[RMDB]
RNA sequence: GGGAACGACUCGAGUAGAGUCGAAAAGAUAUGGAAAUCUCGGUUAUGUCGUUGAAACAGUAUCGGAAACGAUACUGUGGAGACAUACCGAGGAUUUCCUAAGUCAAAAGACCUCUUCGGAGGUCAACACCUAGUUAUUGUUCGCAAUAACUAGGUGAAAAGAAACAACAACAACAAC
Reactivity to 2A3 in 0.01 (KOAc 150mM, MgCl2 10mM, bicine 150mM(pH8.5), 24C), signal-to-noise 6, nucleotides 027 to 126: g010a020u080a040u180g010g020a000a010a010u010c010u000c010g020g020u300u290a020u030g020u010c120g180u300u070g000a020a020a000c000a000g000u000a000u000c010g020g040a090a040a050c010g000a000u000a000c000u000g000u000g000g000a020g000a010c000a010u000a010c000c000g000a030g020g000a000u000u000u000c000c000u010a110a020g050u010c030a030a010a110a180g000a000c020c010u000c020u080u120c300g160g000a010g000g000u000c000a000a000
Reactivity to DMS in 0.01 (KOAc 150mM, MgCl2 10mM, bicine 150mM(pH8.5), 24C), signal-to-noise 7, nucleotides 027 to 126: g020a040u010a300u000g000g000a010a000a000u000c000u000c000g010g000u000u010a010u000g000u000c000g000u000u010g010a270a160a020c000a010g020u000a000u000c000g010g000a110a110a240c010g010a010u000a000c000u000g010u010g000g000a060g010a010c000a000u000a010c010c000g000a020g010g010a010u000u000u000c010c010u000a030a110g010u000c050a110a090a210a180g000a020c000c010u000c000u000u010c220g020g000a020g010g010u000c000a050a140
Structure probing data (2A3 and DMS) for a 177-nucleotide construct.
For DMS the reverse transcriptase was MarathonRT.
For 2A3 the reverse transcriptase was SuperScript II with manganese.
The DMS profile rests on 12,383 reads.
It was measured as part of the RMDB library TTRDES.
The RNA was probed in 150 mM KOAc, 10 mM MgCl2 and 150 mM bicine (pH 8.5) at 24 C.